[RMDB]
RNA sequence: GGGAACGACUCGAGUAGAGUCGAAAACUCUUAAAGGACUAACUUGAAAUUUUCAACAUUCAGUUAAGCCCAUUUCCUUCCUAUUAACAAUCAGUAUUCAAUAUUGUGGCACGUAAGUAAUACUGUAGUUCUGACAGAUUAAUUUAUAUUUGCCUUAAUUUUACCGCGUAUUCGUACGCGGUAAAAUAAAAGAAACAACAACAACAAC
Reactivity to 2A3 in 0.01 (KOAc 150mM, MgCl2 10mM, bicine 150mM(pH8.5), 24C), signal-to-noise 3, nucleotides 027 to 156: c020u000c050u090u150a150a090a050g020g010a040c010u020a010a000c020u120u130g070a080a080a210u090u190u200u230c080a110a070c020a100u010u000c000a010g010u000u020a050a050g000c020c020c000a040u050u040u060c020c040u110u070c030c000u070a120u140u160a160a110c100a070a050u100c030a010g030u050a060u140u130c070a060a050u060a030u170u150g100u040g040g040c030a010c050g020u050a000a040g020u040a040a000u050a060c010u020g020u060a090g130u170u150c060u080g070a040c000a040g010a000u070u070a110a070u110u280u030a120u040a080u060u100u060g020c010c000u060u020a050
Reactivity to DMS in 0.01 (KOAc 150mM, MgCl2 10mM, bicine 150mM(pH8.5), 24C), signal-to-noise 1, nucleotides 027 to 156: c060u000c060u000u020a130a070a220g000g030a000c010u000a070a020c020u000u060g030a040a040a300u000u000u000u000c140a110a170c130a220u000u020c040a060g010u000u000a030a110g000c020c010c020a130u000u000u000c000c020u020u000c050c050u020a070u000u010a040a060c070a210a220u000c030a030g060u000a020u000u000c050a080a100u000a080u010u000g100u000g000g040c020a070c100g000u000a130a060g020u010a010a030u000a040c060u010g050u000a090g010u010u000c060u010g010a050c010a070g010a180u000u000a020a050u000u060u000a070u000a100u040u010u000g010c000c010u000u010a040